[RMDB]
RNA sequence: GGGAACGACUCGAGUAGAGUCGAAAAGCCUCAAGCGUUUGCAAAACGCUGUUUGCGCAAUGAUCUGGAUUUAGCGCAAGUAGGUCCGAAAUCCAGAUCAACAUUUCGGACAACCGCGCUAAUUAAAUCGAUGGUUGAGAUUCGUCUCAACCAUCGAAAAAGAAACAACAACAACAAC
Reactivity to DMS in 0.01 (KOAc 150mM, MgCl2 10mM, bicine 150mM(pH8.5), 24C), signal-to-noise 2, nucleotides 027 to 126: g020c010c010u030c160a100a040g000c000g000u000u000u010g020c260a120a060a030a020c000g020c010u020g010u000u000u000g020c150g010c040a110a090u010g020a060u000c020u000g000g000a050u020u010u010a050g000c000g010c020a050a070g010u010a100g030g000u000c000c010g000a020a050a020u010c130c060a090g000a100u000c100a060a100c160a090u000u000u000c000g020g000a020c030a100a020c150c130g000c000g010c040u000a020a060u000u000a020a100a120
Reactivity to 2A3 in 0.01 (KOAc 150mM, MgCl2 10mM, bicine 150mM(pH8.5), 24C), signal-to-noise 1, nucleotides 027 to 126: g020c000c000u030c010a010a040g010c000g000u020u080u220g040c090a120a070a000a000c000g020c010u010g020u010u110u120g020c010g000c030a010a200u090g070a070u050c020u000g060g030a060u000u030u100a020g000c000g020c020a000a000g080u080a110g120g020u020c020c000g000a000a010a010u050c090c050a040g000a060u030c000a010a000c000a010u060u010u060c050g020g000a000c010a090a010c050c030g080c010g000c020u150a110a120u190u100a090a100a050

This 177-nucleotide RNA was probed chemically with DMS and 2A3. Reactivities are given for positions 27 through 126. For DMS the reverse transcriptase was MarathonRT. For 2A3 the reverse transcriptase was SuperScript II with manganese.